Record summary: An RNA of 207 nucleotides, treated with 2A3 and DMS and read out base by base. 2A3 is a SHAPE reagent: it acylates the 2'-hydroxyl of flexible nucleotides of all four kinds. DMS adducts were read by reverse transcription with MarathonRT. 2A3 adducts were read by reverse transcription with SuperScript II with manganese.
[RMDB]
RNA sequence: GGGAACGACUCGAGUAGAGUCGAAAACACUUGGGCUUGGAAACCUGUACAUACGGUAGACCGUGGGUACAUCUGGUUGCGGCCGUACUGGCGUCGGAACAUCCAAAGGCAUGCAUUUCUUGACGGUGGGCCCACGUUCUGGUGGCAAAACACGGUGGAAUACAUUAGGCUUCGGCCUAAUGUAUUCAAAAGAAACAACAACAACAAC
Reactivity to 2A3 in 0.01 (KOAc 150mM, MgCl2 10mM, bicine 150mM(pH8.5), 24C), signal-to-noise 4, nucleotides 027 to 156: c050a000c020u040u070g040g020g000c000u040u080g060g010a070a060a050c000c010u010g040u050a020c030a070u100a010c020g080g040u050a040g030a140c020c000g000u020g010g000g020u040a030c010a040u060c060u120g070g000u030u060g010c040g030g010c000c000g020u080a050c070u030g080g000c030g080u060c070g060g040a100a070c040a070u060c020c010a110a070a010g010g000c050a040u050g000c020a060u070u100u050c070u130u200g050a040c030g030g030u020g030g020g000c010c010c000a020c020g010u060u020c010u020g070g030u040g050g000c020a000a070a020a000c090a030c060g040g020u050g060
Reactivity to DMS in 0.01 (KOAc 150mM, MgCl2 10mM, bicine 150mM(pH8.5), 24C), signal-to-noise 2, nucleotides 027 to 156: c050a040c080u000u000g020g000g030c000u000u020g000g010a150a150a110c020c010u000g030u020a040c080a150u000a050c050g030g010u000a070g000a030c010c020g000u010g000g050g040u010a050c020a050u000c060u000g050g030u000u010g020c010g000g000c000c020g000u000a070c030u000g020g000c070g030u000c080g010g000a110a060c030a080u000c030c020a060a060a080g020g010c060a130u000g030c090a120u010u010u000c090u000u010g030a110c070g010g060u010g000g000g030c000c000c040a030c110g040u000u000c030u000g010g050u000g020g000c070a040a060a060a050c090a070c030g010g010u000g020
Reactivities are given for positions 27 through 156.